[RMDB]
RNA sequence: GGGAACGACUCGAGUAGAGUCGAAAAAGAUCGAUUACGAUCGAUCAAUGAUGCCCCUCACCCACCUCUGACGAUCCCAGGUGGGCGAGGGAACGGAGCACGGGAUCACGAGCAGUACGCUGCUCGAAAAAGAACUAGACCUUCGGGUCUAGUUCAACCAGACGAAAGAGUUCGCUCUUUCGUCUGGAAAAGAAACAACAACAACAAC
Reactivity to 2A3 in 0.01 (KOAc 150mM, MgCl2 10mM, bicine 150mM(pH8.5), 24C), signal-to-noise 1, nucleotides 027 to 156: a000g000a000u000c000g000a000u050u100a060c200g050a010u040c000g000a000u000c020a000a070u190g020a070u150g030c010c000c000c000u000c010a000c000c020c000a000c000c000u010c040u090g060a080c040g000a010u010c000c020c020a030g000g000u010g010g000g000c000g000a010g000g000g000a020a030c060g070g050a080g090c070a080c120g010g000g000a000u010c010a020c050g000a000g000c000a000g000u070a010c230g000c180u000g000c000u000c000g000a000a000a000a000a000g050a000a000c000u030a000g000a010c000c030u020u090c270g020g000g000u000c000u000a000g000u000u000c000a000a000
About this RNA: Source: RMDB library M2RFPK, as collected in RNAgym. An RNA of 207 nucleotides, treated with 2A3 and read out base by base. For 2A3, 958 sequencing reads were counted. Conditions: 150 mM KOAc, 10 mM MgCl2 and 150 mM bicine (pH 8.5), 24 C.